[RMDB]
RNA sequence: GGGAACGACUCGAGUAGAGUCGAAAAGCCUACACCGGCCUGUUCGAGAUCGCCGGGCUGCGGGAGACCGACGUCGUGUUCGUCUCCGGCGCGGCGGGCGCGGUCGGCUCCAUCGCCGGACAGCUCGCCAAGCUGCACGGGGCCCGGAAGGUCGUCGUGAAUGCUGUGGAUUCGUCCACAGCAUUCAAAAAGAAACAACAACAACAAC
Reactivity to 2A3 in 0.01 (KOAc 150mM, MgCl2 10mM, bicine 150mM(pH8.5), 24C), signal-to-noise 2, nucleotides 027 to 156: g000c000c000u030a020c040a050c040c020g030g000c000c010u090g070u140u190c040g040a030g000a120u110c030g010c010c020g010g010g030c000u190g100c010g030g080g000a000g010a020c080c090g020a000c050g040u230c120g030u200g060u300u020c030g000u000c000u010c000c000g020g000c010g000c010g000g010c000g010g010g010c070g000c050g030g030u050c010g000g000c010u110c060c040a280u230c100g000c010c020g050g030a030c000a010g010c010u020c000g000c000c000a000a050g000c030u090g000c020a010c040g000g030g030g000c000c070c050g040g010a040a040g000g030u020c020g040u030c030g060